[RMDB]
RNA sequence: GGGAACGACUCGAGUAGAGUCGAAAAUUGCUUGUGGUAUCAAAGGAAGAGUGGUGACGUGACUACCUUUAUAGGAAAUACAGUGAUAAUCGCCGCUUGUCUGGCUUCGAUGUUACCCAUGGAGAAGCGAAGUGACCAUUUUCGAAUGGUCACUUCGAAAAGAAACAACAACAACAAC
Reactivity to 2A3 in 0.01 (KOAc 150mM, MgCl2 10mM, bicine 150mM(pH8.5), 24C), signal-to-noise 3, nucleotides 027 to 126: u130u080g050c060u120u070g020u100g110g060u100a030u100c080a070a090a100g010g030a000a080g000a010g080u000g000g050u050g010a050c080g030u060g060a010c030u040a060c030c010u030u180u070a290u190a060g030g050a060a140a090u160a070c100a050g020u040g070a110u060a120a010u060c010g010c000c000g010c040u020u060g130u030c050u030g020g000c000u000u020c050g060a040u090g000u040u000a040c000c000c000a020u130g100g020a110g020a090a000g100
Reactivity to DMS in 0.01 (KOAc 150mM, MgCl2 10mM, bicine 150mM(pH8.5), 24C), signal-to-noise 3, nucleotides 027 to 126: u010u020g000c090u000u010g030u020g010g050u000a040u010c020a040a100a150g000g010a020a070g010a030g050u000g000g020u020g000a050c130g000u020g000a050c030u020a140c000c000u000u050u070a050u040a070g000g000a080a090a100u060a080c280a050g010u000g020a030u040a140a160u020c000g000c000c000g000c000u000u010g020u020c030u010g000g000c050u000u000c030g000a140u020g020u020u030a030c020c020c000a100u000g000g000a100g000a060a050g000

Chemical mapping of a 177-nucleotide RNA with 2A3 and DMS. The 2A3 profile rests on 2,001 reads. It was measured as part of the RMDB library OK1LIB. The DMS profile rests on 6,098 reads.